[RMDB]
RNA sequence: GGGAACGACUCGAGUAGAGUCGAAAAGACGAACGAAAACUCAAAUGUUCCACGGUGCAGAAGGGUCCCUCACAUGAGGAUCACCCAUGUAACUCGGACAGGAUAUGCUUUUGGGAAAAAGAGAGAAUCAGACAUCCUCUUUCGAGAGGAUGUCUGAAAAAGAAACAACAACAACAAC
Reactivity to 2A3 in 0.01 (KOAc 150mM, MgCl2 10mM, bicine 150mM(pH8.5), 24C), signal-to-noise 1, nucleotides 027 to 126: g020a020c050g010a090a020c020g000a010a010a150a030c010u020c020a020a030a140u100g020u120u020c000c000a020c000g000g050u010g010c060a000g060a290a120g010g000g020u060c030c000c030u110c010a240c050a210u300g000a000g040g000a040u200c040a030c000c000c000a000u010g000u010a090a010c040u000c100g040g000a000c000a040g080g060a000u050a010u230g000c030u000u010u020u000g020g020g070a020a080a000a110a020g070a000g000a010g030a030a080
Reactivity to DMS in 0.01 (KOAc 150mM, MgCl2 10mM, bicine 150mM(pH8.5), 24C), signal-to-noise 1, nucleotides 027 to 126: g000a060c080g030a140a120c080g000a120a090a050a100c020u000c040a020a110a130u000g000u010u000c030c030a060c200g010g000u000g000c030a040g000a190a110g010g020g000u020c040c000c020u020c010a120c220a070u010g000a020g000g010a040u000c190a050c000c000c000a120u000g000u000a020a110c000u000c080g000g000a120c010a050g000g000a190u000a030u000g020c020u000u000u000u000g000g010g010a050a020a000a060a070g020a080g000a040g020a040a140
An RNA of 177 nucleotides, treated with 2A3 and DMS and read out base by base. The RNA was probed in 150 mM KOAc, 10 mM MgCl2 and 150 mM bicine (pH 8.5) at 24 C. The 2A3 profile rests on 838 reads. It was measured as part of the RMDB library M2PK90. The DMS profile rests on 642 reads.